[RMDB]
The record gives the reactivity of an RNA of 177 nucleotides to DMS and 2A3. DMS adducts were read by reverse transcription with MarathonRT. The reactions ran in a buffer of 150 mM KOAc, 10 mM MgCl2 and 150 mM bicine (pH 8.5), at 24 C. It was measured as part of the RMDB library OK2TRN.
RNA sequence: GGGAACGACUCGAGUAGAGUCGAAAACAGUCAAGGUGAAGGCGGGCCAGACCAUCGCCGCAUUCUACCAGAGCACCGUCAUGAUCUUUGGCACGAUGGCUCGCUACAUACCGAGAGUUAGGGAAAAACUAAUAUUAUCAUUCGUGAUAAUAUUAGUAAAAGAAACAACAACAACAAC
Reactivity to DMS in 0.01 (KOAc 150mM, MgCl2 10mM, bicine 150mM(pH8.5), 24C), signal-to-noise 9, nucleotides 027 to 126: c070a200g010u000c040a060a290g000g010u000g010a160a200g000g010c010g010g010g000c010c020a070g000a150c110c080a080u000c100g010c050c050g020c110a050u000u000c050u000a090c050c040a070g000a050g010c090a050c050c040g010u000c110a080u000g010a060u000c020u000u000u010g010g010c040a060c120g010a130u000g000g000c010u000c010g010c010u000a040c120a160u010a040c020c010g000a300g000a060g010u000u010a090g000g010g010a050a050a080a100
Reactivity to 2A3 in 0.01 (KOAc 150mM, MgCl2 10mM, bicine 150mM(pH8.5), 24C), signal-to-noise 9, nucleotides 027 to 126: c020a010g120u050c030a040a040g000g010u030g070a110a040g050g000c000g010g010g010c010c000a020g030a080c030c020a080u090c070g030c050c020g010c010a020u110u030c020u070a100c020c030a030g010a010g070c050a020c080c040g110u100c040a090u110g090a100u050c040u070u080u070g020g000c050a000c100g080a060u050g000g000c000u000c000g000c000u020a020c020a070u170a020c000c010g010a010g000a010g050u150u170a100g040g020g000a030a120a030a010